Structure probing data (DMS and 2A3) for a 177-nucleotide construct. The reactions ran in a buffer of 150 mM KOAc, 10 mM MgCl2 and 150 mM bicine (pH 8.5), at 24 C. The DMS profile rests on 1,219 reads. Source: RMDB library OK1LIB, as collected in RNAgym.
[RMDB]
RNA sequence: GGGAACGACUCGAGUAGAGUCGAAAAGAAGGUCGAGUGCACGACCAGAGAGUGCGGUGAGCGACCGACAAAGAGUUCGAAUCGGAACGAACUACCGCAGACGAUCGACUGAAGAUCGAAGUGAGAACCACGUGGUGAGUUUCGACUCACCACGUGGAAAAGAAACAACAACAACAAC
Reactivity to DMS in 0.01 (KOAc 150mM, MgCl2 10mM, bicine 150mM(pH8.5), 24C), signal-to-noise 1, nucleotides 027 to 126: g010a140a130g020g000u000c000g010a170g000u000g010c050a050c050g020a100c050c030a090g000a100g040a120g000u000g000c000g000g000u010g000a080g000c040g000a100c100c010g010a070c110a070a300a180g040a050g000u040u000c060g020a020a240u020c100g030g000a140a130c000g000a000a040c040u020a060c040c000g000c160a000g000a090c030g000a000u000c010g000a130c210u000g000a140a150g000a030u020c130g000a000a120g000u040g000a240g040a110a100
Reactivity to 2A3 in 0.01 (KOAc 150mM, MgCl2 10mM, bicine 150mM(pH8.5), 24C), signal-to-noise 2, nucleotides 027 to 126: g180a130a070g030g000u000c000g100a110g040u300g040c080a000c090g030a000c000c000a010g060a000g000a000g090u280g020c010g000g010u030g050a090g020c010g030a020c000c000g000a000c000a010a140a000g110a000g050u040u140c030g050a000a000u100c020g000g050a160a000c000g000a070a000c000u010a100c000c000g000c030a110g110a060c000g000a000u070c000g040a090c080u210g030a000a060g000a040u000c040g000a070a000g090u040g060a170g020a050a030